[RMDB]
An RNA of 177 nucleotides, treated with 2A3 and DMS and read out base by base. Conditions: 150 mM KOAc, 10 mM MgCl2 and 150 mM bicine (pH 8.5), 24 C. DMS adducts were read by reverse transcription with MarathonRT.

RNA sequence: GGGAACGACUCGAGUAGAGUCGAAAACGGUGCGCGCCGCCGACGAGCCCCUCGAGCAGCACCGCCUGGCCGCUGCGUCGGCAGCCCUGGUGGCGGUGGGUCCCGCCCCCGACCUGACUCUCGAUGCAAUUUACCCGGAUUUCGAUCCGGGUAAAUUAAAAGAAACAACAACAACAAC
Reactivity to 2A3 in 0.01 (KOAc 150mM, MgCl2 10mM, bicine 150mM(pH8.5), 24C), signal-to-noise 3, nucleotides 027 to 126: c030g030g030u100g000c060g010c020g010c050c020g000c010c010g040a040c060g000a010g050c000c000c010c010u060c020g070a050g000c050a010g010c000a030c040c020g010c010c020u060g050g010c040c040g020c020u080g030c010g130u140c100g130g030c000a000g010c010c000c020u100g060g010u070g060g000c020g010g000u050g020g050g000u050c020c020c000g030c000c000c000c000c000g020a030c020c020u040g030a060c010u010c000u010c050g070a050u080g050c020
Reactivity to DMS in 0.01 (KOAc 150mM, MgCl2 10mM, bicine 150mM(pH8.5), 24C), signal-to-noise 2, nucleotides 027 to 126: c050g020g020u010g020c050g020c090g040c000c020g010c000c020g050a110c060g000a100g000c120c010c020c020u070c040g000a120g020c040a090g050c070a050c030c040g020c000c010u020g010g010c070c140g030c000u040g000c000g020u010c090g000g020c080a060g000c030c070c040u000g020g000u010g010g010c050g020g010u000g000g000g000u000c050c050c030g000c070c000c000c000c000g010a030c070c030u000g010a130c040u000c040u030c030g000a060u020g010c170